RNA sequence: GGGAACGACUCGAGUAGAGUCGAAAAAUCCUGGUAAAAGUAGCAGAAUAGAAUGGUGAAAAUCCAUUCCGCCGAAAGGGCAAAGGUUCCUUGGCAAUGUUCGUCAGCCGAGGGUUAGCCGAUCCUAAAUAGGAAGUGAGUUCGCUCACUUCCUAUUAAAAGAAACAACAACAACAAC
Reactivity to DMS in 0.01 (KOAc 150mM, MgCl2 10mM, bicine 150mM(pH8.5), 24C), signal-to-noise 5, nucleotides 027 to 126: a080u000c010c000u000g030g010u020a050a060a100a070g010u030a060g020c090a110g010a120a080u020a090g000a010a020u000g000g000u000g010a070a080a210a070u010c000c000a010u000u000c000c140g010c040c040g000a090a070a090g000g000g000c100a060a060a160g010g000u010u020c000c000u000u000g010g000c000a060a060u050g020u020u010c120g010u010c080a140g000c010c000g010a010g000g000g020u010u060a070g010c000c020g010a120u010c020c020u000a070
Reactivity to 2A3 in 0.01 (KOAc 150mM, MgCl2 10mM, bicine 150mM(pH8.5), 24C), signal-to-noise 4, nucleotides 027 to 126: a010u020c020c000u020g050g030u140a080a050a060a060g080u140a020g090c080a030g050a140a040u100a100g000a010a010u060g000g000u020g020a030a000a000a010u040c000c000a000u020u000c000c000g020c010c000g140a170a110a050g100g010g050c070a100a090a020g010g000u030u040c000c000u000u000g030g000c090a100a180u090g050u140u100c160g100u160c120a090g080c030c010g000a030g010g000g020u070u090a000g000c000c000g000a020u060c000c000u040a110

The data come from the RNA Mapping Database (RMDB), libraries RFM100 and RFMREP. An RNA of 177 nucleotides, treated with DMS and 2A3 and read out base by base. Conditions: 150 mM KOAc, 10 mM MgCl2 and 150 mM bicine (pH 8.5), 24 C.